[RMDB]
RNA sequence: GGGAACGACUCGAGUAGAGUCGAAAACUCAACAAAUGUUUCUCAAAUGUAUUGCUCGACUAAUAACAAUCACUGAAAUACUGAAACAUUUAAUACUACAGUAUUACUUCAGGAAGUAGAUGUUCAAGCUAGCACGUCAGUUCGCUGACGUGCUAGCAAAAGAAACAACAACAACAAC
Reactivity to 2A3 in 0.01 (KOAc 150mM, MgCl2 10mM, bicine 150mM(pH8.5), 24C), signal-to-noise 2, nucleotides 027 to 126: c000u010c020a030a000c040a010a160a060u070g000u000u060u000c180u020c000a060a070a060u160g010u030a040u070u140g060c010u020c080g030a060c020u170a030a150u070a300a000c060a030a060u070c020a000c130u000g000a010a010a010u020a000c010u000g000a030a070a070c000a070u090u090u100a180a130u190a120c210u130a100c000a040g030u000a020u050u110a130c010u040u050c000a000g120g060a040a080g150u170a010g040a040u040g080u020u030c000a010a000